[RMDB]
RNA sequence: GGGAACGACUCGAGUAGAGUCGAAAACUGCGGGUACAACUCCUUUGGCAAACGAUACCGCGACUGCCUUUAAUUUGCUUGAUAGCAACACUCGGCGCACCGGAAUACUUUCGGUAGCUACAUCUGCCGACAACAAUUCCGGAGUGUUCCAUGUCCGCAAAGGUGGUUCGUUCGCGAACCACCUUUGAAAAGAAACAACAACAACAAC
Reactivity to 2A3 in 0.01 (KOAc 150mM, MgCl2 10mM, bicine 150mM(pH8.5), 24C), signal-to-noise 1, nucleotides 027 to 156: c070u090g000c010g030g000g070u080a020c020a020a130c190u140c140c080u130u120u040g120g010c040a060a080a060c040g050a110u070a130c040c020g000c010g020a010c050u020g040c000c000u030u140u130a210a140u050u040u020g000c000u060u180g050a110u100a220g000c000a050a000c060a010c040u080c080g000g020c060g000c000a010c000c000g000g020a000a000u020a050c030u000u040u000c000g000g000u000a000g010c060u280a020c000a080u040c010u000g010c010c010g020a010c030a030a000c000a020a040u000u000c000c010g020g030a010g030u010g000u030u010c020c020a100u140g100u080c060c040g010